Chemical mapping of a 207-nucleotide RNA with 2A3. Source: RMDB library RNAMAK, as collected in RNAgym. 2A3 adducts were read by reverse transcription with SuperScript II with manganese.
[RMDB]
RNA sequence: GGGAACGACUCGAGUAGAGUCGAAAAAACGCUGGGCAGAAGCUGAUAUAAGUCGCACUGCCGAGAGCCUGAAGCGCGCACGGGCUCGUUUGACGCAGUGUAAAUCUUCAGACUUCUGCCUGUGCUGAAGCGCGCACGGCAACCGAAAGGUGCGAAACAUUCUGCCCUACUUCGGUAGGGCAGAAUGAAAAGAAACAACAACAACAAC
Reactivity to 2A3 in 0.01 (KOAc 150mM, MgCl2 10mM, bicine 150mM(pH8.5), 24C), signal-to-noise 2, nucleotides 027 to 156: a020a000c020g000c000u010g000g020g010c000a000g000a000a020g000c010u010g040a020u050a030u120a300a020g070u070c090g000c010a000c000u000g010c030c000g030a010g020a000g040c000c000u060g020a180a050g010c000g000c000g010c020a010c000g000g000g000c000u000c000g000u170u200u160g000a000c000g000c000a000g010u010g020u030a040a150a060u050c020u030u020c040a190g130a300c060u000u000c030u000g000c000c000u000g010u000g000c000u010g020a090a060g000c010g000c010g000c000a000c000g000g010c000a010a020c000c000g000a030a030a000g000g000u010g010c000g010a040a000a000